[RMDB]
RNA sequence: GGGAACGACUCGAGUAGAGUCGAAAAGUGCACGACUUCGGUCGUGCACAAAUAAAGGCAGUCGAGUGCGUACGGCACAGUCAUACGCAGACGCCACGACAAAAAGUAACGUCUUCGGACGUUACAACCGUGGAAAGAGGUUCGCCUCUUUCCACGGAAAAGAAACAACAACAACAAC
Reactivity to DMS in 0.01 (KOAc 150mM, MgCl2 10mM, bicine 150mM(pH8.5), 24C), signal-to-noise 1, nucleotides 027 to 126: g010u000g000c000a020c020g010a010c000u000u010c200g040g020u000c000g010u010g010c000a010c030a000a030a100u000a110a120a070g040g000c030a070g050u000c020g020a110g040u000g000c000g010u000a010c130g000g000c030a200c170a070g050u010c010a040u000a000c000g000c020a080g000a040c020g000c000c000a020c100g000a090c100a000a090a070a040a050g000u000a020a010c000g000u000c000u000u010c140g000g000a010c000g030u070u000a000c000a070a040
Reactivity to 2A3 in 0.01 (KOAc 150mM, MgCl2 10mM, bicine 150mM(pH8.5), 24C), signal-to-noise 2, nucleotides 027 to 126: g000u000g020c000a000c000g010a010c070u040u080c300g050g010u000c010g000u000g050c010a000c010a000a000a000u010a000a000a010g030g000c090a030g010u010c040g070a060g280u100g020c000g010u010a020c040g020g000c110a050c040a300g000u000c000a010u020a020c040g010c000a020g000a030c000g000c000c030a020c030g100a030c040a030a100a000a010a010g010u000a000a000c000g020u020c000u020u030c170g100g010a000c000g000u000u030a010c020a000a010
Structure probing data (DMS and 2A3) for a 177-nucleotide construct. Source: RMDB library M2PK50, as collected in RNAgym. The reactions ran in a buffer of 150 mM KOAc, 10 mM MgCl2 and 150 mM bicine (pH 8.5), at 24 C. For 2A3, 1,923 sequencing reads were counted.